Chemical mapping of a 177-nucleotide RNA with DMS and 2A3. For 2A3 the reverse transcriptase was SuperScript II with manganese. It was measured as part of the RMDB library OK2TST.

[RMDB]
RNA sequence: GGGAACGACUCGAGUAGAGUCGAAAAAUUUGGGGAAUUUGGACCUGGUGACAACAUUGGGUUAUUGGCUUCAAAGACAUCUGCUACAGCCAUUAGAGGUCAAUACUAUGGUAUAGCUGCUGCCAUCCUUGUCGAAAAGUUUCGACUUUUCGACAAGAAAAGAAACAACAACAACAAC
Reactivity to DMS in 0.01 (KOAc 150mM, MgCl2 10mM, bicine 150mM(pH8.5), 24C), signal-to-noise 2, nucleotides 027 to 126: a120u000u000u010g000g000g000g010a120a090u000u020u010g000g000a050c010c020u010g000g050u010g010a110c190a090a110c070a080u000u000g010g030g010u000u000a050u010u000g000g000c010u000u000c040a040a090a060g000a050c070a050u020c050u010g010c080u000a040c100a130g000c020c010a030u000u020a090g020a090g000g010u010c140a040a070u010a020c080u000a040u000g010g010u000a090u000a050g010c000u010g010c050u000g020c020c020a090u010c110
Reactivity to 2A3 in 0.01 (KOAc 150mM, MgCl2 10mM, bicine 150mM(pH8.5), 24C), signal-to-noise 2, nucleotides 027 to 126: a000u120u060u030g020g000g020g040a000a070u040u060u140g060g000a060c000c010u040g000g070u030g030a020c010a130a010c000a170u040u120g080g000g000u020u050a040u060u070g060g020c000u040u000c040a080a090a020g060a020c050a090u040c060u050g030c020u030a050c040a030g020c030c020a060u100u090a060g030a020g050g020u080c010a020a000u070a120c010u050a070u080g080g000u030a040u080a100g020c030u030g000c010u020g010c000c010a030u010c030